[RMDB]
Annotation:
This 177-nucleotide RNA was probed chemically with DMS and 2A3. For 2A3 the reverse transcriptase was SuperScript II with manganese. The reactions ran in a buffer of 150 mM KOAc, 10 mM MgCl2 and 150 mM bicine (pH 8.5), at 24 C. For DMS the reverse transcriptase was MarathonRT.
RNA sequence: GGGAACGACUCGAGUAGAGUCGAAAAAUAUAGAACCGUAUUAAUGGUUGCAGCUUUUUCCUCUUCAUGGAAUCGGUAUAGAUUAUGUCGGGGAGACCGACAGCAUAGCUUAAAACCAUCGUGAAGUAACAUACGUGAACUUCGGUUCACGUAUGUUAAAAGAAACAACAACAACAAC
Reactivity to DMS in 0.01 (KOAc 150mM, MgCl2 10mM, bicine 150mM(pH8.5), 24C), signal-to-noise 2, nucleotides 027 to 126: a030u020a070u030a090g020a030a060c020c010g010u000a170u000u010a100a110u040g000g000u000u000g040c110a120g010c080u000u020u010u000u000c010c020u010c000u000u010c010a010u010g010g010a090a030u000c190g000g050u010a110u020a030g000a050u010u000a060u000g030u010c020g020g000g010g040a150g000a230c000c000g000a030c020a020g010c230a110u020a050g000c040u010u010a030a050a110a050c000c000a050u020c040g000u000g000a010a040g000u010
Reactivity to 2A3 in 0.01 (KOAc 150mM, MgCl2 10mM, bicine 150mM(pH8.5), 24C), signal-to-noise 5, nucleotides 027 to 126: a000u170a000u040a030g080a000a010c000c000g010u050a150u140u190a220a060u190g040g000u040u040g090c090a050g130c040u060u050u040u040u040c000c010u010c000u010u010c000a030u000g180g110a170a090u150c130g000g000u020a050u070a120g090a090u020u080a030u160g090u140c010g000g000g020g000a180g120a070c000c020g000a010c000a000g020c030a030u170a050g020c000u020u120a050a060a010a000c000c000a000u030c000g000u010g020a010a000g000u030